[RMDB]
RNA sequence: GGGAACGACUCGAGUAGAGUCGAAAAUACAUUACCCUGUAAGCCAGAGACUUUAAGGGUGCAGCUUGUGUGUGGGUUGAAGCAAGAAGUCUCUCUGAAAUGUCAAGGAUGUUCUCUUCAUAUUCAAUCGUCCAUAAUCGUUCGCGAUUAUGGACGAAAAAGAAACAACAACAACAAC
Reactivity to 2A3 in 0.01 (KOAc 150mM, MgCl2 10mM, bicine 150mM(pH8.5), 24C), signal-to-noise 1, nucleotides 027 to 126: u150a010c010a030u100u110a070c000c000c000u020g060u060a060a000g000c000c070a070g010a040g030a130c000u150u000u040a020a090g020g000g050u080g140c040a020g000c000u040u000g010u020g030u040g000u070g200g070g000u000u000g040a030a020g070c030a010a010g040a040a010g000u000c000u000c000u000c020u020g070a050a110a240u170g140u080c010a090a080g030g030a100u020g020u050u020c090u000c010u070u000c080a080u000a090u300u000c080a000a150
Reactivity to DMS in 0.01 (KOAc 150mM, MgCl2 10mM, bicine 150mM(pH8.5), 24C), signal-to-noise 1, nucleotides 027 to 126: u000a030c110a080u030u070a000c020c000c010u010g000u000a050a000g000c170c030a010g030a100g010a020c100u050u000u000a260a200g000g000g010u060g000c260a070g000c070u000u000g000u040g000u000g040u040g000g000g000u000u050g040a070a090g000c150a040a030g040a000a010g000u000c010u040c000u060c020u000g000a030a100a030u030g010u040c160a070a300g000g000a100u000g000u000u000c000u000c060u000u010c110a040u000a130u120u010c130a030a120
Chemical mapping of a 177-nucleotide RNA with 2A3 and DMS. For DMS, 1,194 sequencing reads were counted. The RNA was probed in 150 mM KOAc, 10 mM MgCl2 and 150 mM bicine (pH 8.5) at 24 C.